[RMDB]
RNA sequence: GGGAACGACUCGAGUAGAGUCGAAAAUACUAGCACCUGCUCAUUUUCAGGAUCGAAACGGCGCCGUCACCAUCGAAUUCCCAGAUCAAACGGUGAGCACCACAACCGACAAUUUAAAUGCGCACGGCAAUCCUUGGGCAUUCGUGCCCAAGGAUUGAAAAGAAACAACAACAACAAC
Reactivity to DMS in 0.01 (KOAc 150mM, MgCl2 10mM, bicine 150mM(pH8.5), 24C), signal-to-noise 1, nucleotides 027 to 126: u040a190c100u000a040g020c080a020c050c020u010g000c000u020c040a100u000u000u030u000c190a070g000g000a120u000c090g000a070a060a010c090g040g000c060g030c020c070g000u000c170a020c040c070a010u010c070g030a040a120u000u040c010c000c010a100g000a070u000c090a090a060a130c100g000g000u000g030a100g000c040a010c010c000a030c010a010a090c000c050g020a110c130a090a120u040u010u000a010a020a090u020g040c090g000c020a000c070g000g000
Reactivity to 2A3 in 0.01 (KOAc 150mM, MgCl2 10mM, bicine 150mM(pH8.5), 24C), signal-to-noise 4, nucleotides 027 to 126: u150a010c140u100a010g040c010a030c030c020u000g000c000u000c070a120u010u050u150u120c070a060g100g000a100u120c040g080a090a030a060c070g020g040c030g000c020c000g060u090c010a020c020c040a040u070c030g010a060a070u020u020c030c000c020a010g040a090u080c030a000a140a010c010g030g010u010g060a030g000c020a020c020c000a040c010a070a010c000c030g060a040c070a050a040u110u110u230a150a100a050u180g020c040g000c040a000c030g040g000